RNA sequence: GGGAACGACUCGAGUAGAGUCGAAAAAAGAGGCAUACUAUGGAGAAUUAUGAACUAGAGAAGCACUGUUACGACUUGUUACGUGACUGUGAUGCUGUAGCUCCCCAUGAUUUCUUCAUCUUUGAUGGCAUCCCUAUCUUCGGAUAGGGAAAAAGAAACAACAACAACAAC
Reactivity to DMS in 0.01 (KOAc 150mM, MgCl2 10mM, bicine 150mM(pH8.5), 24C), signal-to-noise 9, nucleotides 027 to 129: a030a030g030a080g010g020c020a030u020a050c080u020a030u020g010g000a020g000a010a010u000u000a020u030g030a060a130c010u000a000g020a060g010a060a040g000c030a000c020u020g010u010u010a000c000g000a080c090u020u020g020u070u050a100c010g020u010g010a000c020u000g020u000g020a030u000g030c000u010g010u000a000g000c110u020c120c180c060c020a040u010g000a040u000u010u010c030u000u010c010a000u010c100u010u020u030g040a040u020g020g030c160a120
Reactivity to 2A3 in 0.01 (KOAc 150mM, MgCl2 10mM, bicine 150mM(pH8.5), 24C), signal-to-noise 9, nucleotides 027 to 129: a000a000g170a030g010g010c010a020u040a050c020u030a020u040g000g000a010g010a000a000u040u010a020u050g040a040a020c050u050a050g000a000g010a180a010g030c000a000c010u030g000u000u010a000c010g050a040c100u140u200g110u270u160a050c000g000u000g010a000c010u010g020u010g040a060u070g010c020u040g030u050a010g010c020u090c030c020c010c010a000u010g010a040u070u110u040c000u000u010c000a010u010c060u060u080u170g080a060u050g030g040c020a040